Source information
The data come from the RNA Mapping Database (RMDB), library VIROID. This 177-nucleotide RNA was probed chemically with DMS and 2A3.
RNA sequence: GGGAACGACUCGAGUAGAGUCGAAAAGUGCCCCACUGGGGAAUACACUACGGGAGUUACCUGUAUGGUGCCAAGGGGUCGAAGAGGGAUCCCCGGGGAAACCUACUCGAGCGAGGCGGAGAUCGAGGCAUAGAUCUUAGUUCGCUAAGAUCUAUGCAAAAGAAACAACAACAACAAC
Reactivity to DMS in 0.01 (KOAc 150mM, MgCl2 10mM, bicine 150mM(pH8.5), 24C), signal-to-noise 2, nucleotides 027 to 126: g000u000g000c040c000c010c080a100c150u020g030g010g000g020a140a090u000a170c040a050c050u000a040c070g000g000g030a300g010u020u010a130c020c020u020g020u000a000u000g020g010u010g020c020c110a110a090g010g000g000g030u000c050g000a080a120g000a060g000g010g010a120u000c010c020c010c100g000g030g000g020a050a090a070c070c000u000a050c000u000c000g000a030g000c080g000a060g000g010c020g000g010a060g000a080u010c060g000a090g000
Reactivity to 2A3 in 0.01 (KOAc 150mM, MgCl2 10mM, bicine 150mM(pH8.5), 24C), signal-to-noise 2, nucleotides 027 to 126: g060u050g020c000c010c010c020a130c140u210g030g020g040g040a000a050u180a130c070a010c050u070a010c010g000g000g010a150g170u200u200a130c000c000u000g000u090a080u130g060g030u060g010c020c020a070a090g060g010g000g000u030c040g020a070a040g020a060g070g070g000a060u070c000c000c000c050g010g030g010g030a050a040a020c010c000u010a030c010u020c000g010a020g050c030g010a040g090g000c060g010g030a100g000a040u030c030g020a080g130
DMS adducts were read by reverse transcription with MarathonRT.
The RNA was probed in 150 mM KOAc, 10 mM MgCl2 and 150 mM bicine (pH 8.5) at 24 C.
Values cover nucleotides 27 to 126.